[RMDB]
RNA sequence: GGGAACGACUCGAGUAGAGUCGAAAACACCGGUGCCGUGGAUGCGACCUAUGAUAGUGGAACCGGAACCUGGUCUGUCUCUGUGCCCACCGGUGGGCUUCUCUCAGGCGACCACACAGUGUAUGUGGGGUGAAACCACUUUCGAGUGGUUUCACCCAAAAGAAACAACAACAACAAC
Reactivity to 2A3 in 0.01 (KOAc 150mM, MgCl2 10mM, bicine 150mM(pH8.5), 24C), signal-to-noise 1, nucleotides 027 to 126: c010a010c000c000g060g000u040g010c020c040g080u090g070g020a020u050g000c010g030a020c000c010u170a150u190g200a140u050a100g040u060g150g090a100a140c030c050g080g060a020a070c020c040u050g040g020u000c040u090g050u040c000u030c030u120g080u120g000c000c020c000a020c000c020g060g000u060g000g090g000c110u220u050c030u040c030u000c010a030g070g050c010g010a070c040c000a000c000a000c010a050g160u140g080u210a050u090g060u070g040